[RMDB]
RNA sequence: GGGAACGACUCGAGUAGAGUCGAAAAGAAAGAAAGAAUGCUUUCCUCCUGGUAUAUUUUGCAUUUGCUGGUUUCUUUAAGAGGAAAUCGAGCAACAAGUGACAUGAAUGCAGAACUGGAAAGAUAAAACUAGUAGUGCGUUCGCGCACUACUAGUUAAAAGAAACAACAACAACAAC
Reactivity to DMS in 0.01 (KOAc 150mM, MgCl2 10mM, bicine 150mM(pH8.5), 24C), signal-to-noise 2, nucleotides 027 to 126: g020a040a120a040g040a090a090a050g030a120a040u050g030c000u000u000u010c010c000u010c130c030u010g000g050u050a090u030a140u000u010u010u000g010c000a050u000u010u010g000c020u000g010g000u000u000u000c000u000u000u030a160a070g070a050g000g010a000a000a000u000c010g030a040g000c020a090a030c300a100a100g000u020g000a120c030a030u010g080a030a040u020g010c050a020g010a030a140c120u060g000g010a000a000a000g000a080u000a000a120
Reactivity to 2A3 in 0.01 (KOAc 150mM, MgCl2 10mM, bicine 150mM(pH8.5), 24C), signal-to-noise 3, nucleotides 027 to 126: g050a050a060a010g050a050a120a020g130a030a050u270g030c000u020u000u000c000c000u030c000c000u040g030g190u070a130u000a070u090u110u050u040g010c010a030u010u020u000g010c040u020g000g040u000u000u000c000u000u090u090a160a120g070a030g180g020a000a040a000u030c080g060a050g050c000a010a060c030a050a120g050u060g120a040c020a070u140g100a200a010u070g020c010a000g000a050a110c050u020g000g000a030a050a000g030a040u200a070a110